RNA sequence: GGGAACGACUCGAGUAGAGUCGAAAAGCUUAAUAACCUGCGCUGAGCCCUUCUCCCCCAGCUUGCCUGUGUCCUAGGGAAUUGGAAGGUCAUCAUUCACAGGAUCGUGUGGAAGUCCUGCUCGGGGUCCAAACAUGGUAAUUCGUUACCAUGUUAAUAGUCCUAUGUAGUUCGCUACAUAGGACUAAAAAGAAACAACAACAACAAC
Reactivity to DMS in 0.01 (KOAc 150mM, MgCl2 10mM, bicine 150mM(pH8.5), 24C), signal-to-noise 2, nucleotides 027 to 156: g020c030u010u000a090a120u000a080a090c000c020u010g030c040g010c130u000g010a120g010c030c020c040u000u010c010u000c050c010c000c010c020a120g010c030u000u010g010c040c020u010g000u010g030u020c050c020u010a100g020g020g000a050a120u000u000g030g000a070a060g040g030u000c040a120u000c040a110u000u000c040a080c000a040g000g000a070u000c040g010u000g030u000g020g000a080a110g050u010c020c010u000g000c050u000c040g010g000g060g000u000c040c040a020a030a030c000a020u000g000g020u000a020a090u000u010c260g010u020u000a030c000c000a020u000g000u000u000a050a130
Reactivity to 2A3 in 0.01 (KOAc 150mM, MgCl2 10mM, bicine 150mM(pH8.5), 24C), signal-to-noise 1, nucleotides 027 to 156: g040c020u050u080a080a040u050a130a220c020c020u080g040c030g010c090u090g010a110g000c000c040c090u080u070c090u090c000c000c000c000c000a000g000c010u030u070g080c000c000u050g000u000g010u070c010c010u050a020g000g000g050a020a030u080u040g080g000a000a090g000g010u040c030a040u050c000a020u060u020c050a020c040a110g000g000a080u140c070g080u040g000u040g050g050a000a050g020u010c000c000u010g000c000u000c000g000g000g050g010u080c050c010a030a060a000c000a000u000g030g010u000a040a000u000u070c030g020u000u000a000c000c000a000u000g000u010u000a000a000
The record gives the reactivity of an RNA of 207 nucleotides to DMS and 2A3. For DMS, 4,377 sequencing reads were counted. The reactions ran in a buffer of 150 mM KOAc, 10 mM MgCl2 and 150 mM bicine (pH 8.5), at 24 C. For 2A3, 728 sequencing reads were counted. High 2A3 reactivity points to a flexible backbone, as in loops and unpaired stretches.